Source information: Structure probing data (DMS and 2A3) for a 177-nucleotide construct. The DMS profile rests on 3,120 reads. 2A3 is a SHAPE reagent: it acylates the 2'-hydroxyl of flexible nucleotides of all four kinds. Reactivities are rounded to 0.1 and cut off at 0 and 3. The data come from the RNA Mapping Database (RMDB), library TTRINS.
RNA sequence: GGGAACGACUCGAGUAGAGUCGAAAAGAUAUGGAUUCUCGCAAGGAAUGGGCACUGUAAGCAUAAUAUGGUCGGAAACGACCAUAUUAUGUUGAGGUGCCAUUCUGAUGACCGAGAAUCCUAAGUCCCUUCUAUUGACGUUCGCGUCAAUAGAAGGAAAAGAAACAACAACAACAAC
Reactivity to DMS in 0.01 (KOAc 150mM, MgCl2 10mM, bicine 150mM(pH8.5), 24C), signal-to-noise 4, nucleotides 027 to 126: g000a140u000a300u020g000g000a020u000u010c000u000c010g040c070a100a280g010g000a010a000u000g040g040g000c000a020c000u000g010u010a300a040g010c000a000u020a020a000u000a000u000g000g030u000c000g020g000a150a070a270c010g000a010c000c000a000u000a010u000u000a000u000g000u000u000g000a230g000g010u000g010c000c000a000u000u000c000u000g020a110u010g000a140c300c010g020a020g000a030a000u000c000c000u000a010a110g000u000c040
Reactivity to 2A3 in 0.01 (KOAc 150mM, MgCl2 10mM, bicine 150mM(pH8.5), 24C), signal-to-noise 2, nucleotides 027 to 126: g030a050u160a110u250g030g010a020u020u030c010u030c030g080c080a150a300g030g070a030a010u260g140g300g070c020a010c010u090g170u300a000a030g000c000a010u000a000a000u000a000u020g000g000u020c040g010g070a110a130a110c020g000a030c000c000a010u000a010u000u000a000u010g000u000u000g000a000g010g040u000g000c000c000a000u000u000c010u000g040a080u210g040a030c110c010g000a000g000a000a000u000c000c000u020a070a010g000u020c000